[RMDB]
Description
The data come from the RNA Mapping Database (RMDB), library OK2TST. Structure probing data (DMS) for a 177-nucleotide construct. For DMS the reverse transcriptase was MarathonRT. Reactivities are given for positions 27 through 126. DMS (dimethyl sulfate) methylates the pairing face of unpaired adenines and cytosines. Conditions: 150 mM KOAc, 10 mM MgCl2 and 150 mM bicine (pH 8.5), 24 C. Reactivities are rounded to 0.1 and cut off at 0 and 3. The DMS profile rests on 806 reads.
RNA sequence: GGGAACGACUCGAGUAGAGUCGAAAAAAACUCAAAUAUGACACAUCUGAUUUUUUAGAUUUACUAGAAAGUGGUGGAAUUCGUGGUAGGAUAAUAGAUGUUUCACUUACAGAUUACAUUAUAAGCCAUGCGGAAAUUAUUUCGAUAAUUUCCGCAUAAAAGAAACAACAACAACAAC
Reactivity to DMS in 0.01 (KOAc 150mM, MgCl2 10mM, bicine 150mM(pH8.5), 24C), signal-to-noise 1, nucleotides 027 to 126: a040a030a050c040u010c040a070a070a060u010a100u000g000a090c130a070c100a040u010c010u000g000a010u000u020u000u000u000u000a080g000a280u000u000u000a060c010u000a040g000a030a040a060g010u010g000g010u010g000g000a080a100u000u000c030g010u000g020g000u010a030g000g000a070u010a040a050u000a070g010a050u000g020u000u000u010c000a030c040u020u000a080c080a030g000a040u000u000a080c040a020u010u010a070u000a030a130g000c060c090